Chemical mapping of a 177-nucleotide RNA with 2A3 and DMS.
Source: RMDB libraries RFM100 and RFMREP, as collected in RNAgym.
The reactions ran in a buffer of 150 mM KOAc, 10 mM MgCl2 and 150 mM bicine (pH 8.5), at 24 C.
RNA sequence: GGGAACGACUCGAGUAGAGUCGAAAAGAAAGAAAGAAUAGGACUGUCUUAGAAUGGUGUACAUUCUAAAACAGUCUCCAACACAAACUCGUCUUAGAAUGUCAUACAUUUUAAGACGGGCUUAUAACUAAAACCUUAUCUUCGGAUAAGGUUUUAGAAAAGAAACAACAACAACAAC
Reactivity to 2A3 in 0.01 (KOAc 150mM, MgCl2 10mM, bicine 150mM(pH8.5), 24C), signal-to-noise 2, nucleotides 027 to 126: g080a000a110a000g120a040a090a000g100a040a110u170a120g010g000a000c000u000g000u000c000u000u020a000g000a020a000u040g010g000u130g030u200a070c000a010u000u000c000u000a000a030a040a000c000a000g000u000c000u000c000c030a140a050c080a000c010a030a110a060c000u000c000g000u010c000u000u000a000g000a000a000u030g000u060c030a060u170a300c040a060u040u010u000u000a000a000g000a000c000g010g000g000c010u030u080a100u070a150a020
Reactivity to DMS in 0.01 (KOAc 150mM, MgCl2 10mM, bicine 150mM(pH8.5), 24C), signal-to-noise 4, nucleotides 027 to 126: g010a090a100a080g000a130a100a100g000a140a150u020a130g010g000a010c000u000g000u010c050u010u000a010g000a030a020u000g000g030u050g010u030a140c000a000u000u010c000u000a020a000a020a010c000a000g020u000c000u010c110c100a100a110c210a070c140a070a100a100c000u000c010g000u000c000u010u000a000g000a000a010u000g000u020c290a170u020a300c000a000u000u010u000u000a000a000g000a010c000g000g000g000c040u020u030a030u030a120a160